[RMDB]
RNA sequence: GGGAACGACUCGAGUAGAGUCGAAAAGUAACAAUCUUCGGAUUGUUACAUAGCCUCCAGGAGGAAACCAAAACCUUAGAAAGAAAAGAGAAAGAAAAAGAAGUGACUACCUGUUCGCAGGUAGUAAUAAUGUGAUACAUUUCGAUGUAUCACAUUAAAAAGAAACAACAACAACAAC
Reactivity to 2A3 in 0.01 (KOAc 150mM, MgCl2 10mM, bicine 150mM(pH8.5), 24C), signal-to-noise 5, nucleotides 027 to 126: g000u000a000a000c000a010a010u010c010u030u030c130g050g000a000u000u010g000u000u000a000c000a000u010a010g040c000c010u020c050c030a050g070g070a020g000g010a130a080a130c060c020a040a040a040a080c000c010u090u080a060g110a080a140a010g050a030a080a060a000g070a010g030a020a090a020g070a020a080a010a020a000g070a060a010g070u060g110a010c010u010a010c000c000u010g010u040u060c240g010c050a000g000g000u000a000g000u010a000a000
Reactivity to DMS in 0.01 (KOAc 150mM, MgCl2 10mM, bicine 150mM(pH8.5), 24C), signal-to-noise 6, nucleotides 027 to 126: g010u000a000a010c000a020a000u000c000u000u020c240g030g010a010u000u000g000u000u010a000c000a060u000a110g010c050c020u000c060c080a130g000g010a040g000g000a080a100a130c080c100a070a050a110a090c060c050u000u000a070g000a070a070a070g000a030a040a040a040g000a070g000a040a040a050g000a040a040a040a060a050g000a070a070g020u000g010a030c000u000a000c000c000u000g010u000u010c200g010c010a010g000g000u000a000g000u000a030a060
Chemical mapping of a 177-nucleotide RNA with 2A3 and DMS. For DMS the reverse transcriptase was MarathonRT. The RNA was probed in 150 mM KOAc, 10 mM MgCl2 and 150 mM bicine (pH 8.5) at 24 C. 2A3 adducts were read by reverse transcription with SuperScript II with manganese. The data come from the RNA Mapping Database (RMDB), library M2PK50.